Conditions: 150 mM KOAc, 10 mM MgCl2 and 150 mM bicine (pH 8.5), 24 C. Chemical mapping of a 177-nucleotide RNA with 2A3 and DMS. For DMS the reverse transcriptase was MarathonRT.
RNA sequence: GGGAACGACUCGAGUAGAGUCGAAAAACCUGACUCGAAAUCAGGCAGGCGUUUAUAGCGCCUCGGGGGUUCGAAUCCCCCCCUCUCCGCCAGAUUGUGGUGACGCGUUGUGCCAAUGCCGCGUGAGAUACUGAGUAGGGUUCGCCCUACUCAGUAUAAAAGAAACAACAACAACAAC
Reactivity to 2A3 in 0.01 (KOAc 150mM, MgCl2 10mM, bicine 150mM(pH8.5), 24C), signal-to-noise 5, nucleotides 027 to 126: a000c000c000u020g030a030c020u020c100g060a030a030a060u050c000a010g060g000c010a010g000g000c020g020u060u040u070a210u110a050g010c000g000c000c000u000c000g010g000g000g010g000u040u010c020g030a050a110u050c000c010c000c000c000c000c010u020c010u000c020c010g050c010c010a080g110a250u090u160g080u040g110g030u020g010a030c020g040c010g090u060u190g070u070g060c030c050a060a070u110g030c010c000g010c020g040u050g020a070g000
Reactivity to DMS in 0.01 (KOAc 150mM, MgCl2 10mM, bicine 150mM(pH8.5), 24C), signal-to-noise 6, nucleotides 027 to 126: a080c010c000u020g000a050c030u010c220g000a070a150a220u000c020a020g000g010c170a010g000g010c010g020u000u000u040a090u040a170g000c000g000c010c010u010c130g000g000g000g010g000u010u020c120g020a300a100u020c000c000c000c000c010c030c030u000c010u000c010c010g040c030c040a050g010a140u010u000g020u010g010g010u000g010a070c060g000c070g010u020u030g020u010g000c030c080a080a070u030g000c080c040g000c020g000u000g000a080g010